Description
Conditions: 150 mM KOAc, 10 mM MgCl2 and 150 mM bicine (pH 8.5), 24 C. Structure probing data (2A3) for a 207-nucleotide construct.
[RMDB]
RNA sequence: GGGAACGACUCGAGUAGAGUCGAAAAGUAAAAGAGCAUUCCGACGAGUUUGGUAGGUGGCUGGCGGUGGUGAUGAAAGGGUUCGCUUCUGCACUAUUAUAUGUUUCUGGGGCUACAUCUCUAUCUCUUGAGCAGUCUGCGCAGGGUACUUUAGGACACUGCUUAAGGCCUUCGGGCCUUAAGCAGUAAAAGAAACAACAACAACAAC
Reactivity to 2A3 in 0.01 (KOAc 150mM, MgCl2 10mM, bicine 150mM(pH8.5), 24C), signal-to-noise 1, nucleotides 027 to 156: g030u080a000a070a030a000g050a000g010c010a030u060u030c050c000g020a050c060g000a040g030u040u080u080g090g000u030a090g020g070u060g000g000c030u030g070g020c000g030g040u080g010g050u100g000a120u090g050a040a010a020g050g000g000u050u020c050g010c000u050u050c010u050g040c000a000c050u040a040u280u090a140u050a080u080g080u010u080u000c050u050g030g000g070g020c000u040a010c020a050u050c060u000c010u130a100u050c040u050c010u070u110g060a000g050c000a000g100u010c050u110g030c040g000c040a000g050g010g020u020a070c010u090u130u100a040g000g050a000c030